Overview
This 177-nucleotide RNA was probed chemically with DMS and 2A3. Reactivities are rounded to 0.1 and cut off at 0 and 3. Source: RMDB library M2PK50, as collected in RNAgym. For 2A3, 9,984 sequencing reads were counted.
RNA sequence: GGGAACGACUCGAGUAGAGUCGAAAAUAGGUUGAAUUCGUUCAACCUACAGGCAAGCAAGCAGCGCAACGAGACAAGGCGAUAAUAAGAUAGCGCAUGCUGAUACAUCGGUCUUCGGACCGAUGAACCUAUUUCUUGCAUUCGUGCAAGAAAUAGGAAAAGAAACAACAACAACAAC
Reactivity to DMS in 0.01 (KOAc 150mM, MgCl2 10mM, bicine 150mM(pH8.5), 24C), signal-to-noise 5, nucleotides 027 to 126: u010a000g010g010u010u010g010a020a040u000u000c180g020u000u000c000a000a000c000c000u000a010c120a070g000g010c090a070a110g000c110a110a070g010c020a060g020c030g010c010a100a120c110g010a080g000a080c120a060a120g000g010c080g010a070u010a060a070u010a090a120g010a100u000a070g010c020g030c040a060u000g000c010u000g000a140u010a190c000a000u000c000g000g000u000c000u000u000c200g010g020a000c000c000g000a000u000g000a060a100
Reactivity to 2A3 in 0.01 (KOAc 150mM, MgCl2 10mM, bicine 150mM(pH8.5), 24C), signal-to-noise 6, nucleotides 027 to 126: u040a000g000g000u010u010g000a010a020u080u080c160g030u090u000c010a000a000c000c000u000a030c020a010g090g040c050a010a080g010c020a050a020g000c020a010g010c010g000c010a040a040c040g060a030g050a120c060a100a050g120g070c040g090a060u060a180a060u110a120a060g100a170u130a060g020c020g000c030a040u050g000c000u010g000a030u030a180c000a000u000c010g000g010u000c000u010u050c170g080g010a010c000c000g000a000u000g000a000a000